[RMDB]
RNA sequence: GGGAACGACUCGAGUAGAGUCGAAAACGAGCAUGAGCCACAGUUCCGAGCGAAGGGACGCGGGGGAGAGGGACAGACCCGAGAGGGGAUGAAACGGCAAAGAGCAUUGGAACAUCGGAGGAAUACCUCCCAAGAAGGAAAAAGAGAACUCAAGAAGCAUGCUUAUGUGGUUCGCCACAUAAGCAUGAAAAGAAACAACAACAACAAC
Reactivity to 2A3 in 0.01 (KOAc 150mM, MgCl2 10mM, bicine 150mM(pH8.5), 24C), signal-to-noise 2, nucleotides 027 to 156: c030g010a030g010c070a070u110g030a010g010c000c060a070c060a060g050u070u010c020c030g000a040g050c060g070a080a060g000g000g030a030c040g050c030g010g000g000g000g000a060g000a040g020g020g010a010c030a060g030a020c000c030c040g020a040g000a010g010g020g020g000a010u070g000a040a090a010c050g040g000c050a040a120a000g050a040g000c040a050u080u120g040g010a020a010c020a070u060c030g020g000a020g010g000a050a040u100a180c000c000u030c020c020c010a000a050g040a030a020g020g020a020a120a000a020a000g040a010g020a020a020c050u060c060a050a020g050a010a000g050
Reactivity to DMS in 0.01 (KOAc 150mM, MgCl2 10mM, bicine 150mM(pH8.5), 24C), signal-to-noise 1, nucleotides 027 to 156: c060g060a100g070c100a070u000g000a300g010c010c010a160c030a220g000u000u000c010c030g000a250g070c000g000a170a170g020g000g000a120c060g000c110g000g000g000g030g000a110g050a000g000g020g010a030c090a060g050a260c000c020c000g010a150g000a100g000g010g010g070a150u000g010a090a060a170c140g000g070c090a100a110a110g010a070g020c010a160u000u000g000g000a180a040c030a100u000c090g030g030a080g000g010a100a120u000a070c020c000u000c020c060c070a020a070g010a060a100g000g000a060a010a040a050a090g000a160g030a130a070c050u000c020a070a130g000a200a210g000
Source information:
Source: RMDB library VIROID, as collected in RNAgym. This 207-nucleotide RNA was probed chemically with 2A3 and DMS. Reactivities are given for positions 27 through 156. For 2A3, 1,745 sequencing reads were counted. DMS adducts were read by reverse transcription with MarathonRT. For 2A3 the reverse transcriptase was SuperScript II with manganese.